Chemical mapping of a 177-nucleotide RNA with DMS and 2A3. 2A3 adducts were read by reverse transcription with SuperScript II with manganese. The DMS profile rests on 1,670 reads. The 2A3 profile rests on 503 reads.
RNA sequence: GGGAACGACUCGAGUAGAGUCGAAAACUAAUGCGUUGGGUUCUCCCAAGCGCAGCGGAGACUCCUCGGAGACUCUGUGGUGAAGAGCGGGAGAGCGUAAGAGGUAGUGGAGAACGUAAGAGGGAGCUACCCAUGAGCACUUCGGUGCUCAUGGGUAAAAAGAAACAACAACAACAAC
Reactivity to DMS in 0.01 (KOAc 150mM, MgCl2 10mM, bicine 150mM(pH8.5), 24C), signal-to-noise 1, nucleotides 027 to 126: c050u000a040a070u030g000c040g000u000u030g000g000g000u000u010c120u010c000c000c000a140a220g010c020g000c000a040g000c010g020g090a010g000a040c000u000c000c040u040c300g000g000a000g000a010c010u010c030u010g010u060g030g000u000g050a100a030g030a090g010c150g020g010g020a030g020a020g000c000g010u010a040a010g000a040g000g000u000a050g000u070g000g000a040g010a100a030c040g000u000a050a110g000a080g000g000g000a190g040c260
Reactivity to 2A3 in 0.01 (KOAc 150mM, MgCl2 10mM, bicine 150mM(pH8.5), 24C), signal-to-noise 1, nucleotides 027 to 126: c050u030a180a000u130g060c120g000u050u020g030g070g000u150u090c040u040c040c000c000a000a110g000c010g020c000a000g000c010g000g000a000g000a040c000u000c010c010u000c150g070g000a020g080a090c000u000c000u000g060u070g000g230u070g100a060a010g050a040g100c000g020g020g010a020g000a050g050c040g060u160a160a030g080a030g090g020u220a020g020u030g090g000a040g060a050a000c000g020u070a100a030g070a020g100g000g000a000g040c020